RNA sequence: GGGAACGACUCGAGUAGAGUCGAAAAAGGGGUGCAAACCGAGUGCCUGAGCUGGUCGACGUCCAGCUCCCUCGGGACCACGCUGCUCUGGGCGGAAGAGUCUUCUGACACUUCUAGCCUAUUCAGCUUCGCGUCCUUGAGGCCUGGCGUAACGCGGGCCACUCAUACAGUUCGCUGUAUGAGUGGCAAAAGAAACAACAACAACAAC
Reactivity to DMS in 0.01 (KOAc 150mM, MgCl2 10mM, bicine 150mM(pH8.5), 24C), signal-to-noise 1, nucleotides 027 to 156: a060g020g040g010g020u000g030c040a050a080a180c070c020g010a110g060u010g040c040c070u020g030a060g000c000u000g020g020u000c040g050a300c170g000u010c000c000a010g010c000u020c010c010c000u000c030g010g010g040a030c050c030a110c100g040c050u000g010c030u010c040u010g000g020g020c010g030g000a030a030g000a120g030u000c020u010u010c220u000g020a070c040a160c000u000u010c000u000a090g040c000c010u010a010u000u000c020a030g040c010u000u000c050g060c110g040u000c000c030u000u000g030a100g000g020c080c080u000g020g000c000g030u000a070a090c050g020c020g000g000
Chemical mapping of a 207-nucleotide RNA with DMS. Reactivities are given for positions 27 through 156. The reactions ran in a buffer of 150 mM KOAc, 10 mM MgCl2 and 150 mM bicine (pH 8.5), at 24 C. DMS adducts were read by reverse transcription with MarathonRT. For DMS, 3,120 sequencing reads were counted.